Structure probing data (2A3 and DMS) for a 177-nucleotide construct.
Reactivities are given for positions 27 through 126.
For DMS, 2,560 sequencing reads were counted.
DMS adducts were read by reverse transcription with MarathonRT.
RNA sequence: GGGAACGACUCGAGUAGAGUCGAAAAGUGCCGAUUGAAAUUCAUGGGAGCCUCUCCAUAAUGGAUGAACGCCGCGUUAGUUCGCGCAGUCGCGACGUAAACGCUCUGUAUUCCCGUUCAGGCCUCAAGGGUCCUAAUAUUUCGAUAUUAGGACCCUAAAAGAAACAACAACAACAAC
Reactivity to 2A3 in 0.01 (KOAc 150mM, MgCl2 10mM, bicine 150mM(pH8.5), 24C), signal-to-noise 2, nucleotides 027 to 126: g100u030g050c010c020g090a090u080u130g050a160a110a070u070u050c040a040u060g010g000g050a010g050c010c060u130c020u000c040c000a080u200a300a100u240g040g000a030u100g030a020a010c000g020c060c020g000c010g040u000u070a060g050u100u130c020g000c000g000c110a020g240u300c040g000c010g000a000c020g020u030a070a070a020c020g020c020u060c010u120g030u040a130u030u090c040c000c000g000u050u050c010a010g000g040c000c000u050c060a000
Reactivity to DMS in 0.01 (KOAc 150mM, MgCl2 10mM, bicine 150mM(pH8.5), 24C), signal-to-noise 3, nucleotides 027 to 126: g010u010g010c010c020g020a150u000u000g000a110a110a060u000u010c080a040u010g000g000g010a060g000c130c070u010c070u000c020c010a090u000a090a050u000g010g000a040u000g000a080a060c070g010c050c030g020c010g020u000u000a150g010u010u000c090g000c100g010c170a150g010u010c040g010c000g010a030c040g010u000a080a060a060c090g010c000u000c040u010g020u000a180u000u000c040c020c000g000u000u000c100a080g020g000c100c110u010c180a110
Reactivities are rounded to 0.1 and cut off at 0 and 3.